RNA sequence: GGGAACGACUCGAGUAGAGUCGAAAAUCUGCUGCCCACUCUAGUACCCUCCCCUGGGGGAUGCCGCGAGGUCUGAUGUCAAACCCAGGAUCAGGAUACAGGGCCGUUGAUGGGAGAAAAUAUGGCAGAGACACAUGAAAUUCGUUUCAUGUGUCUCAAAAGAAACAACAACAACAAC
Reactivity to 2A3 in 0.01 (KOAc 150mM, MgCl2 10mM, bicine 150mM(pH8.5), 24C), signal-to-noise 3, nucleotides 027 to 126: u040c010u040g020c020u050g000c000c000c000a040c060u110c030u050a110g040u090a100c010c000c000u020c030c020c000c010u000g000g000g000g000g000a010u080g040c020c010g050c030g020a060g040g090u090c120u210g120a140u180g050u110c050a120a020a050c020c010c010a000g020g010a010u090c060a000g000g000a010u030a070c050a040g010g040g000c000c000g040u040u110g040a080u050g010g080g010a070g100a030a110a040a020u190a110u120g060g000c050a000
Reactivity to DMS in 0.01 (KOAc 150mM, MgCl2 10mM, bicine 150mM(pH8.5), 24C), signal-to-noise 4, nucleotides 027 to 126: u000c000u000g000c010u000g020c000c010c060a130c110u020c070u000a150g020u000a090c030c000c020u000c190c080c010c020u000g010g000g010g010g010a300u010g010c000c010g020c210g010a120g020g010u010c140u010g030a180u010g000u010c100a070a210a150c020c000c000a050g000g010a060u020c100a020g010g020a050u000a040c050a100g000g000g020c130c110g000u000u010g010a070u000g010g020g010a090g000a060a050a040a110u010a070u000g010g020c050a140
Structure probing data (2A3 and DMS) for a 177-nucleotide construct.